Chemical mapping of a 207-nucleotide RNA with 2A3. Values cover nucleotides 27 to 156. 2A3 is a SHAPE reagent: it acylates the 2'-hydroxyl of flexible nucleotides of all four kinds. 2A3 adducts were read by reverse transcription with SuperScript II with manganese. Source: RMDB library ARCHII, as collected in RNAgym.
RNA sequence: GGGAACGACUCGAGUAGAGUCGAAAAAACAUCCCAGGACGUCAUCGCUUAUAGGCUGCUCCGUUCACCAGAGCUCACUGGUGUUCGGCUAAGAUUAAAGAGCUCGCCUCUCGCACCCUGACCUUCGGGUCGCUUGAGGUUAAAUCAAUAGAAGGACCAUAGAACCAGGGUUCGCCCUGGUUCUAUGAAAAGAAACAACAACAACAAC
Reactivity to 2A3 in 0.01 (KOAc 150mM, MgCl2 10mM, bicine 150mM(pH8.5), 24C), signal-to-noise 2, nucleotides 027 to 156: a000a000c070a100u040c000c000c000a010g040g020a060c100g040u120c040a160u140c130g030c080u220u270a130u110a290g010g060c020u010g000c000u000c020c000g000u000u000c000a000c000c000a000g050a060g080c000u000c030a120c010u010g000g000u020g000u010u000c010g010g000c000u040a060a010g050a140u260u300a140a180a110g000a000g000c000u000c020g000c000c000u000c000u000c000g000c000a000c000c010c010u020g030a010c010c000u010u000c010g020g020g000u000c010g000c000u000u000g000a000g000g000u000u000a000a000a000u110c030a000a000u000a000g000a000a000g000g000a000c010